[RMDB]
RNA sequence: GGGAACGACUCGAGUAGAGUCGAAAAUGGUGCUGCUGGCGGAGUGGUUGCAGUUGCACUGUGGCUUGUCUGGAGAAAGGGUGGUCGGUAAACCGCGGCUCGCUCAUCCCUCUGGGGUCGCAGCCGGCGUGGAAUAGGCGUUCGCGCCUAUUCCACGAAAAGAAACAACAACAACAAC
Reactivity to DMS in 0.01 (KOAc 150mM, MgCl2 10mM, bicine 150mM(pH8.5), 24C), signal-to-noise 2, nucleotides 027 to 126: u000g020g020u000g000c030u000g000c040u000g010g040c070g010g020a100g030u000g010g010u000u000g020c040a060g020u000u010g000c070a190c040u000g030u000g010g000c090u000u010g010u000c060u010g000g010a070g000a070a100a110g000g010g020u000g010g010u000c040g000g020u000a060a060a130c130c050g000c050g000g000c000u000c130g000c040u010c040a050u000c030c030c000u020c150u010g020g010g020g020u000c120g020c030a080g000c030c010g010g010
Reactivity to 2A3 in 0.01 (KOAc 150mM, MgCl2 10mM, bicine 150mM(pH8.5), 24C), signal-to-noise 1, nucleotides 027 to 126: u080g060g000u060g000c020u010g020c000u080g010g030c020g110g080a100g050u100g040g050u080u070g000c040a060g000u070u070g060c060a050c100u060g050u040g050g010c000u050u090g020u160c060u060g020g020a060g010a110a120a070g050g000g000u000g000g000u010c030g010g000u090a090a030a040c000c000g000c000g010g020c030u020c070g010c010u070c000a090u060c030c020c040u000c120u080g000g010g000g010u030c030g000c030a000g020c010c010g020g000